Structure probing data (DMS and 2A3) for a 177-nucleotide construct. For DMS the reverse transcriptase was MarathonRT. The RNA was probed in 150 mM KOAc, 10 mM MgCl2 and 150 mM bicine (pH 8.5) at 24 C. For 2A3 the reverse transcriptase was SuperScript II with manganese. The data come from the RNA Mapping Database (RMDB), library TTRINS.
RNA sequence: GGGAACGACUCGAGUAGAGUCGAAAAGAUAUGGACAAGACCAGCCUUGGAUUUAUGGGACAUUUAUAGCAUAUCGGAAACGAUAUGCUAUACCAUCCCAUUGUCAGGCUGGUUCUUGUCCUAAGUCGACAUGCUAGUAGUUCGCUACUAGCAUGUCAAAAGAAACAACAACAACAAC
Reactivity to DMS in 0.01 (KOAc 150mM, MgCl2 10mM, bicine 150mM(pH8.5), 24C), signal-to-noise 3, nucleotides 027 to 126: g010a130u000a300u000g000g010a010c030a000a020g010a040c000c000a000g010c000c000u010u020g050g000a030u000u010u000a000u000g020g000g020a030c170a250u010u000u000a000u000a020g000c010a000u000a000u000c000g000g010a180a110a220c000g020a010u010a000u000g000c000u000a000u000a000c300c300a300u000c000c000c010a010u000u000g000u000c000a040g000g000c000u010g000g010u000u010c000u010u000g010u000c000c000u000a010a070g010u010c110
Reactivity to 2A3 in 0.01 (KOAc 150mM, MgCl2 10mM, bicine 150mM(pH8.5), 24C), signal-to-noise 2, nucleotides 027 to 126: g040a010u230a100u200g000g000a000c010a010a000g010a000c000c020a000g000c010c040u210u300g300g010a100u300u300u040a010u040g010g000g020a000c060a100u130u300u030a010u000a000g040c020a000u000a000u030c040g020g020a110a080a010c010g000a000u000a010u020g000c000u000a000u000a000c000c000a010u000c000c000c000a000u000u000g030u050c010a000g000g000c010u000g000g000u000u000c000u000u000g010u020c000c000u000a000a000g000u000c030